The record gives the reactivity of an RNA of 207 nucleotides to DMS and 2A3. It was measured as part of the RMDB library RNAMAK. Conditions: 150 mM KOAc, 10 mM MgCl2 and 150 mM bicine (pH 8.5), 24 C. For 2A3, 2,269 sequencing reads were counted. For DMS, 3,228 sequencing reads were counted. Reactivities are given for positions 27 through 156.
RNA sequence: GGGAACGACUCGAGUAGAGUCGAAAAUGCUAGAUUCGUCUAGCAAAAAAUCCUAAGUCGAUUUAGUGCUUAAAGACAUGGCUAUUCGGAAACGAAUAGCCAACAGCUUUAAGAACUACACUGAUCGAUAUGGAAAAAAUUGCACUUCGGUGCAAAAUGUAAGAGAAAUAUUCGUAUUUCUCUUACAAAAAGAAACAACAACAACAAC
Reactivity to DMS in 0.01 (KOAc 150mM, MgCl2 10mM, bicine 150mM(pH8.5), 24C), signal-to-noise 2, nucleotides 027 to 156: u000g030c000u000a000g030a040u000u010c250g020u000c000u000a010g060c000a000a010a110a080a080a090u000c000c000u000a040a300g020u000c000g030a030u000u000u000a010g000u000g000c000u020u000a000a010a030g010a080c030a300u000g020g020c020u000a020u000u000c010g000g000a110a110a300c000g010a040a010u010a000g000c000c050a010a010c060a140g010c020u010u000u000a020a060g010a060a100c020u010a170c090a050c060u010g000a020u000c010g010a050u010a300u000g040g000a000a090a060a000a100a130u000u000g000c000a010c000u000u010c260g030g020u000g010c000a000a000a040a090
Reactivity to 2A3 in 0.01 (KOAc 150mM, MgCl2 10mM, bicine 150mM(pH8.5), 24C), signal-to-noise 2, nucleotides 027 to 156: u040g000c000u000a000g000a020u060u020c050g030u030c080u010a010g000c010a020a010a000a010a030a010u040c040c000u070a090a010g030u000c000g000a010u010u050u250a020g000u000g020c010u000u010a000a000a000g010a030c020a110u020g000g010c000u000a000u000u010c010g040g010a050a060a060c010g020a010a000u000a000g030c010c020a000a000c000a000g000c000u000u000u000a000a000g010a040a060c010u150a030c050a000c010u000g010a010u000c000g000a000u000a040u100g000g100a000a000a000a010a000a110u200u190g000c120a000c020u070u060c290g110g010u000g000c000a000a030a020a090